RNA sequence: GGGAACGACUCGAGUAGAGUCGAAAAGGGAGGUGUAGAAUAAGUGGGAGGCUCUGCCGUCUGUGAAAUACCACUACUCUCAAUGUUGUUUUACUUAUACCAUGAUGUAGCAUCUGUGUGGCCUCGCCCUGUUUUAUUAGUUCGCUAAUAAAACAGGAAAAGAAACAACAACAACAAC
Reactivity to 2A3 in 0.01 (KOAc 150mM, MgCl2 10mM, bicine 150mM(pH8.5), 24C), signal-to-noise 4, nucleotides 027 to 126: g060g010g020a040g010g000u100g020u110a070g050a200a070u110a100a020g030u040g000g040g020a060g010g010c020u020c060u230g000c010c020g080u050c030u030g090u020g060a060a050a010u070a020c000c010a010c020u040a040c000u020c010u000c020a040a080u070g000u020u010g030u000u020u020u060a050c010u030u090a040u060a110c000c020a060u110g020a050u090g080u060a020g030c010a020u040c040u050g070u010g030u060g080g000c010c020u030c020g050c000
Reactivity to DMS in 0.01 (KOAc 150mM, MgCl2 10mM, bicine 150mM(pH8.5), 24C), signal-to-noise 5, nucleotides 027 to 126: g000g000g010a040g010g030u000g010u000a040g010a110a050u010a040a070g020u000g000g000g010a070g020g010c030u000c130u000g030c040c050g010u020c130u020g010u000g000a050a040a090u010a090c050c020a030c030u000a060c040u000c030u000c070a090a100u000g010u000u000g010u000u000u000u010a060c080u000u000a100u010a080c070c050a050u000g000a060u000g010u000a070g020c050a030u000c030u000g000u000g010u000g000g010c030c020u000c070g010c170